RNA sequence: GGGAACGACUCGAGUAGAGUCGAAAAGUAUUCAUUCUCCUUUCUCGAUAGAGAUUGGAGUCAUACAACCCCAGAAACCAUUCCUUAUACCUUGAGUAUUGCUGAAUUCAGUUAAGCGUGCAUGCUCUUAAUGGGUGCACCUUCGGGUGCACCCAAAUCGGUGAUAAACGUUCGCGUUUAUCACCGAAAAAGAAACAACAACAACAAC
Reactivity to 2A3 in 0.01 (KOAc 150mM, MgCl2 10mM, bicine 150mM(pH8.5), 24C), signal-to-noise 1, nucleotides 027 to 156: g000u000a030u030u150c130a090u090u040c000u010c000c040u020u010u010c030u010c020g130a230u090a300g000a000g000a000u000u000g010g000a000g000u000c000a080u080a010c010a100a090c000c000c000c010a030g090a090a060a000c030c020a120u140u240c050c000u130u200a120u160a300c040c000u080u220g000a000g030u040a060u300u190g080c000u010g140a230a170u160u160c010a010g040u000u170a070a000g010c000g020u050g010c030a010u030g000c000u010c000u150u120a220a020u060g000g000g000u010g070c040a010c000c030u060u000c170g130g000g000u000g000c000a000c010c000c000a000a000a000

Conditions: 150 mM KOAc, 10 mM MgCl2 and 150 mM bicine (pH 8.5), 24 C. Structure probing data (2A3) for a 207-nucleotide construct. Reactivities are rounded to 0.1 and cut off at 0 and 3. It was measured as part of the RMDB library M2RFPK. For 2A3, 305 sequencing reads were counted.